Description
The data come from the RNA Mapping Database (RMDB), library TTRDES. Structure probing data (2A3 and DMS) for a 177-nucleotide construct. The 2A3 profile rests on 7,465 reads. Values cover nucleotides 27 to 126. For DMS the reverse transcriptase was MarathonRT. The RNA was probed in 150 mM KOAc, 10 mM MgCl2 and 150 mM bicine (pH 8.5) at 24 C.

RNA sequence: GGGAACGACUCGAGUAGAGUCGAAAAGAUAUGGAUGGGUCUAUGCGUCGUUGAAACAUAAUCGGAAACGAUUAUGUGGAGACGGUAGAGCCCAUCCUAAGUCAAAACAAGUCCUUCGGGACUUGAACAUCCCUACUGAGUUCGCUCAGUAGGGAUGAAAAGAAACAACAACAACAAC
Reactivity to 2A3 in 0.01 (KOAc 150mM, MgCl2 10mM, bicine 150mM(pH8.5), 24C), signal-to-noise 2, nucleotides 027 to 126: g010a030u060a030u150g000g000a010u010g000g020g010u030c020u030a040u220g300c070g020u020c010g200u300u060g000a000a010a000c000a000u000a000a000u020c000g010g020a050a050a030c000g000a010u010u000a000u010g010u000g000g000a020g000a000c000g000g000u010a000g000a030g070c010c000c000a000u000c000c000u010a000a010g000u010c040a000a020a060a200c000a000a000g020u000c010c000u030u080c290g110g000g000a010c000u000u000g000a040a020
Reactivity to DMS in 0.01 (KOAc 150mM, MgCl2 10mM, bicine 150mM(pH8.5), 24C), signal-to-noise 4, nucleotides 027 to 126: g000a030u010a300u010g000g000a020u000g020g000g010u010c000u000a010u000g020c010g030u000c000g010u010u020g000a300a170a020c000a010u000a010a000u010c010g000g000a140a070a190c000g010a010u000u000a000u000g010u000g000g010a090g010a000c000g010g000u000a010g000a110g010c000c000c010a000u000c000c010u000a020a070g010u000c040a100a090a130a300c020a010a000g000u000c000c000u000u020c270g030g010g000a010c000u000u000g000a120a250